[RMDB]
RNA sequence: GGGAACGACUCGAGUAGAGUCGAAAACUGUUCCAGGACUGCAGAACUGGCCCAGACCUCUGUAUUGGAAAGGUCUUUAUGGACCAGGGAGUCCGGUGUCUUUUUUACGGGGGACCCCUGGGCUGCGACCACUGAAACAAUUCGUUGUUUCAGUGGUAAAAGAAACAACAACAACAAC
Reactivity to DMS in 0.01 (KOAc 150mM, MgCl2 10mM, bicine 150mM(pH8.5), 24C), signal-to-noise 4, nucleotides 027 to 126: c070u000g000u000u000c010c020a100g010g010a080c070u000g010c060a060g030a150a120c080u010g010g010c020c010c030a050g010a070c010c010u000c040u010g020u000a100u010u010g010g000a050a090a040g010g010u000c020u000u000u010a090u010g000g000a030c010c000a110g000g010g000a100g030u000c000c000g010g010u000g000u010c010u000u000u010u010u010u010a080c100g000g000g010g020g000a070c030c060c200c010u010g020g010g010c010u000g000c090g000
Reactivity to 2A3 in 0.01 (KOAc 150mM, MgCl2 10mM, bicine 150mM(pH8.5), 24C), signal-to-noise 2, nucleotides 027 to 126: c030u040g030u140u000c010c000a020g030g070a040c040u130g010c040a040g020a130a070c020u050g010g000c010c010c020a030g010a040c000c010u000c020u050g090u190a230u160u220g060g040a100a080a010g030g000u010c000u020u160u050a220u170g030g030a040c000c030a040g020g010g030a120g000u000c000c000g050g040u060g050u030c040u200u250u110u030u070u130a040c030g070g020g000g000g100a060c000c040c000c000u000g000g020g000c010u020g000c020g030
An RNA of 177 nucleotides, treated with DMS and 2A3 and read out base by base. For DMS, 5,758 sequencing reads were counted. For DMS the reverse transcriptase was MarathonRT.